Description
The record gives the reactivity of an RNA of 177 nucleotides to 2A3 and DMS. The data come from the RNA Mapping Database (RMDB), library OK2TST. The RNA was probed in 150 mM KOAc, 10 mM MgCl2 and 150 mM bicine (pH 8.5) at 24 C.
[RMDB]
RNA sequence: GGGAACGACUCGAGUAGAGUCGAAAACAAGUCGAUAAUAAUGUGACGAGGAACUUGCCCGGGAAAUUAUUUCAGGAAUGGGCCCAGUGGGACGUGGCUAUCCUGCAUUACUUGGGUCUUGACCAUAAGUGCCAUUAUCAUUCGUGAUAAUGGCACUAAAAGAAACAACAACAACAAC
Reactivity to 2A3 in 0.01 (KOAc 150mM, MgCl2 10mM, bicine 150mM(pH8.5), 24C), signal-to-noise 2, nucleotides 027 to 126: c030a030a030g050u060c020g070a060u050a240a060u150a120a070u280g060u090g060a030c030g020a060g010g050a060a070c040u080u100g050c010c000c000g020g040g030a100a110a020u240u130a150u030u150u090c040a040g000g040a050a030u050g000g000g000c010c000c010a020g000u060g000g030g010a030c070g070u080g020g010c020u020a040u060c000c000u020g000c010a020u070u130a050c040u070u080g000g000g000u000c050u010u040g030a020c010c000a020u050a130
Reactivity to DMS in 0.01 (KOAc 150mM, MgCl2 10mM, bicine 150mM(pH8.5), 24C), signal-to-noise 3, nucleotides 027 to 126: c060a050a130g030u000c040g000a100u000a130a020u000a110a080u020g000u010g010a080c040g020a260g000g010a130a080c110u000u000g010c020c000c030g000g000g000a070a050a070u000u000a080u000u040u010c120a090g010g000a030a100u000g010g010g020c010c000c030a090g040u000g030g010g000a080c130g010u000g000g000c040u020a140u000c020c000u010g000c070a110u010u010a070c100u040u020g010g000g000u010c010u000u000g000a300c030c030a130u010a050
About this RNA: DMS adducts were read by reverse transcription with MarathonRT.